Overview:
The record gives the reactivity of an RNA of 177 nucleotides to 2A3 and DMS. The data come from the RNA Mapping Database (RMDB), library M2PK90. The RNA was probed in 150 mM KOAc, 10 mM MgCl2 and 150 mM bicine (pH 8.5) at 24 C.
RNA sequence: GGGAACGACUCGAGUAGAGUCGAAAAUAAAAAGCGUAGCAAAAAUUGGCCGAUGGGCAUGUCAAGGGCGUCUGGAGCAAUCCUGACGGACAUGCUGCUACGAAAAAUACAUGGGCAAAAAAAAAAAUACAUGUCAAUAGUUCGCUAUUGACAUGUAAAAAGAAACAACAACAACAAC
Reactivity to 2A3 in 0.01 (KOAc 150mM, MgCl2 10mM, bicine 150mM(pH8.5), 24C), signal-to-noise 1, nucleotides 027 to 126: u090a030a050a040a030a000g010c000g020u050a010g000c030a070a060a170a120a300u230u220g060g000c000c000g000a030u020g020g000g000c000a010u010g000u000c050a050a020g170g060g090c020g000u000c010u140g010g000a010g000c030a000a040u010c000c010u020g000a000c010g010g010a000c010a000u000g030c000u010g000c000u010a000c000g030a130a040a000a000a020u150a080c020a020u090g040g030g000c000a000a000a030a000a000a070a060a060a000a000a000
Reactivity to DMS in 0.01 (KOAc 150mM, MgCl2 10mM, bicine 150mM(pH8.5), 24C), signal-to-noise 1, nucleotides 027 to 126: u020a130a060a110a120a150g020c030g030u000a010g010c000a060a040a040a140a130u010u010g000g020c010c020g000a020u000g000g000g000c020a000u010g010u000c000a140a090g030g000g030c030g000u000c000u000g020g000a010g020c250a180a160u000c000c000u000g010a010c000g000g010a000c000a000u010g000c000u000g000c000u000a010c000g000a000a010a080a100a060u000a050c050a000u000g010g000g020c000a010a000a000a030a000a030a010a180a120a090a120